Description: Source: RMDB library OK1LIB, as collected in RNAgym. Structure probing data (2A3) for a 177-nucleotide construct. Conditions: 150 mM KOAc, 10 mM MgCl2 and 150 mM bicine (pH 8.5), 24 C.
RNA sequence: GGGAACGACUCGAGUAGAGUCGAAAACACAUACACUUGUACCAUUAAAUCCUGGGAUAAGCUCACAAGUGGUACCAUCACAGCACUUUGAAAGAAAUCCUGUAGCUCCAGGUUCACAAACUACACCUCCUGCUUGUUUGUUCGCAAACAAGCAGGAAAAAGAAACAACAACAACAAC
Reactivity to 2A3 in 0.01 (KOAc 150mM, MgCl2 10mM, bicine 150mM(pH8.5), 24C), signal-to-noise 1, nucleotides 027 to 126: c040a000c010a000u270a050c010a000c030u000u010g050u070a020c000c000a090u010u300a120a090a000u070c060c020u070g000g000g070a090u110a200a000g110c000u010c000a010c010a150a020g000u000g030g040u060a110c000c000a130u210c000a030c050a000g040c000a000c070u030u110u160g040a080a050a000g110a050a090a000u070c030c000u000g010u060a020g000c000u000c020c000a010g100g000u000u030c130a110c060a090a040a000c000u000a000c000a040c000c050